Conditions: 150 mM KOAc, 10 mM MgCl2 and 150 mM bicine (pH 8.5), 24 C. This 207-nucleotide RNA was probed chemically with 2A3. The 2A3 profile rests on 775 reads.
RNA sequence: GGGAACGACUCGAGUAGAGUCGAAAAAGCGAUGACACGUCAUCGCAACGAUUGCCUGAUCGUAAAACAGGAGACGGCCGUGGCCGCGACCACGUAAAAAAGCGUAACGUGGUCUACGGACCACGAAAAAAGCGCGGAACGUUCGCGUUCCGCGCAACAGUUCACAAAUCUUCGGAUUUGUGAACUGAAAAGAAACAACAACAACAAC
Reactivity to 2A3 in 0.01 (KOAc 150mM, MgCl2 10mM, bicine 150mM(pH8.5), 24C), signal-to-noise 1, nucleotides 027 to 156: a000g000c010g010a000u000g000a030c000a020c260g070u030c010a000u000c000g020c020a020a030c000g010a010u000u020g020c000c000u050g020a030u010c020g200u220a000a020a000a040c010a040g090g000a030g040a080c210g100g040c120c030g010u000g000g000c020c020g000c000g010a000c000c000a010c020g010u050a020a130a000a000a000a000g080c020g000u040a050a020c000g020u000g030g000u000c010u050a100c090g050g040a120c010c020a000c010g010a030a000a000a000a000a000g010c000g010c000g000g000a020a000c010g080u180u150c240g030c030g130u010u020c020c000g000c000g000c010a000a010
Source information:
Source: RMDB library M2RFPK, as collected in RNAgym.